RNA sequence: GGGAACGACUCGAGUAGAGUCGAAAAGCCUCCUCGCUUCCAUAGAAAGGGGACGGGGCAGAUCGCAAGUGCUACAACCGAGCGGUGGUAUCUGUCAAACUAACCAGCCACUGCACAUCAAUUGACUAAACGAUGCCGAUCUUCGGAUCGGCAUCAAGAUCAUGCCUAUCUUCGGAUAGGCAUGAUCAAAAGAAACAACAACAACAAC
Reactivity to 2A3 in 0.01 (KOAc 150mM, MgCl2 10mM, bicine 150mM(pH8.5), 24C), signal-to-noise 2, nucleotides 027 to 156: g000c030c060u010c060c010u010c030g060c050u040u020c000c000a090u060a220g220a270a100a090g060g000g000g000a030c020g040g010g000g000c050a000g010a090u140c080g050c120a220a020g080u050g090c010u050a060c020a180a080c000c090g110a000g060c020g000g010u040g000g050u080a100u100c060u190g060u040c070a170a090a020c050u110a040a020c050c050a020g010c000c010a000c020u020g140c010a000c050a110u270c050a100a300u160u160g150a060c090u150a100a120a000c050g000a000u000g000c020c010g020a000u000c000u090u090c130g080g000a010u000c010g000g000c000a000u000c000a000a000